[RMDB]
RNA sequence: GGGAACGACUCGAGUAGAGUCGAAAAACCCUCAGACUGGAGGCAGCAGACGUGAGGGUGUACAACAACGCUGGGUGGUCCACUGACCUGAGUGUACCUGUGUGUGAGCGUGCGGUGUUCCACAUCGCCUCCCACAGGGGUUCGCCCCUGUGGGAGGAAAAGAAACAACAACAACAAC
Reactivity to 2A3 in 0.01 (KOAc 150mM, MgCl2 10mM, bicine 150mM(pH8.5), 24C), signal-to-noise 1, nucleotides 027 to 126: a000c010c010c020u000c000a050g010a070c000u070g000g070a020g050g070c030a040g010c030a050g030a080c050g090u040g020a020g020g040g000u020g030u040a040c040a090a000c000a100a030c010g020c090u060g020g010g110u030g000g050u010c040c010a040c050u080g090a120c000c060u110g040a000g030u040g000u050a030c020c020u060g040u010g010u000g000u040g070a040g010c040g020u050g010c040g010g000u020g040u030u090c030c000a030c000a070u060c020g020
Reactivity to DMS in 0.01 (KOAc 150mM, MgCl2 10mM, bicine 150mM(pH8.5), 24C), signal-to-noise 2, nucleotides 027 to 126: a030c010c000c000u010c040a120g010a100c040u000g010g020a120g030g000c030a080g020c020a010g000a120c080g020u000g000a040g010g010g000u010g020u010a040c090a120a090c070a060a000c070g040c030u000g010g010g010u000g000g010u010c040c050a050c060u010g000a140c090c040u020g000a060g030u010g000u000a080c040c020u010g020u000g000u020g000u010g000a110g010c110g010u010g000c080g030g010u010g000u010u020c000c050a050c050a050u000c080g000